[RMDB]
RNA sequence: GGGAACGACUCGAGUAGAGUCGAAAAUAGAUACGCUUCUGACGACUGACGGUGCCCAGCUCAUCGGUGCAGACGCUAACGCACACGCGUUGGCAUGGGAUCGCGCGAGCCCGCCAAAUACCAAGGGCACAGCAGCACUUUUCGAAGUGCUGCUGUGAAAAGAAACAACAACAACAAC
Reactivity to DMS in 0.01 (KOAc 150mM, MgCl2 10mM, bicine 150mM(pH8.5), 24C), signal-to-noise 3, nucleotides 027 to 126: u050a070g000a070u000a060c110g000c050u000u000c010u010g020a120c090g000a110c070u010g000a100c110g000g000u010g000c010c040c030a080g000c060u000c050a070u000c070g010g000u000g040c030a010g000a110c200g010c000u000a020a020c020g030c020a200c300a060c300g030c010g000u000u010g000g020c030a170u010g030g010g020a020u000c040g000c090g000c010g000a090g000c030c010c030g040c070c010a030a080a030u000a100c060c160a040a180g000g000g000
Reactivity to 2A3 in 0.01 (KOAc 150mM, MgCl2 10mM, bicine 150mM(pH8.5), 24C), signal-to-noise 4, nucleotides 027 to 126: u230a030g100a070u120a090c070g010c030u030u030c030u080g050a030c040g020a050c030u070g030a040c010g050g030u040g000c000c000c010a000g010c020u040c030a110u050c050g070g020u090g030c010a010g020a090c060g000c020u030a020a000c010g010c020a090c010a030c270g000c000g010u000u000g010g000c010a030u050g000g000g050a040u040c050g010c010g040c020g070a010g030c000c000c000g030c010c000a060a140a040u120a070c050c050a030a080g040g020g010